[RMDB]
RNA sequence: GGGAACGACUCGAGUAGAGUCGAAAAACGGGCACGUUCGCGUGCCCGUAAUGAACGCUGCAACGCGCAGAGAUCUCGGGAGAGCGCGAAUGCACAAAGAAACAUUUCCAGUUUUCGAACUGGAAAAUGUCCAUUGUGUGUUCGCACACAAUGGACAAAAAGAAACAACAACAACAAC
Reactivity to DMS in 0.01 (KOAc 150mM, MgCl2 10mM, bicine 150mM(pH8.5), 24C), signal-to-noise 1, nucleotides 027 to 126: a040c000g010g000g040c000a010c020g040u000u000c160g020c020g100u000g000c000c000c010g000u000a000a000u010g000a070a150c200g000c080u020g020c020a060a100c140g010c140g090c020a060g000a070g020a070u000c060u020c010g020g020g010a120g000a080g010c070g040c010g030a020a070u000g010c000a010c040a040a000a040g000a140a120a050c050a080u000u000u000c000c010a000g000u000u000u000u030c160g020a010a010c000u010g000g010a010a000a000a020